RNA sequence: GGGAACGACUCGAGUAGAGUCGAAAAGAAAGAAAGUACUUAAAGUAUUGUGGGAAAUAAUGUGUAAAUCAUUGACCGUUCCUGCGCUGGUAAGAAUAAAAUUUUAGUCCAGACACCACCAGUAUAACCAAUCUAGUGACCUUCGGGUCACUAGAAAGUCUUAACAAUGGUUCGCCAUUGUUAAGACAAAAGAAACAACAACAACAAC
Reactivity to 2A3 in 0.01 (KOAc 150mM, MgCl2 10mM, bicine 150mM(pH8.5), 24C), signal-to-noise 2, nucleotides 027 to 156: g040a030a050a010g070a050a180a010g020u070a040c070u090u100a240a060a000g050u050a110u150u100g010u030g000g000g010a030a040a000u070a000a020u040g010u010g010u050a010a020a000u020c010a020u020u020g020a020c000c020g020u080u090c040c020u040g010c020g000c030u010g000g030u020a020a030g040a050a060u180a110a140a100a130u030u110u050u060a020g000u000c000c000a010g010a040c020a030c010c010a000c010c010a010g060u060a090u040a200a020c050c010a040a030u000c000u010a010g000u000g010a000c000c000u030u020c170g070g000g000u000c000a000c000u000a000g000a000a000a000
Reactivity to DMS in 0.01 (KOAc 150mM, MgCl2 10mM, bicine 150mM(pH8.5), 24C), signal-to-noise 1, nucleotides 027 to 156: g020a170a090a140g000a080a140a020g000u000a030c100u010u000a120a090a110g000u000a020u000u010g000u000g000g000g000a050a060a040u000a000a050u000g050u000g110u000a150a090a300u000c050a020u010u000g010a100c050c000g000u000u000c030c020u000g020c030g000c040u000g000g000u000a000a090g010a090a000u000a050a080a140a300u020u020u000u000a140g000u000c000c000a120g000a160c200a060c000c050a070c000c010a040g020u030a070u020a060a090c090c060a130a100u000c000u000a070g000u000g000a020c000c000u000u000c300g050g020g000u020c000a000c000u000a050g000a040a010a050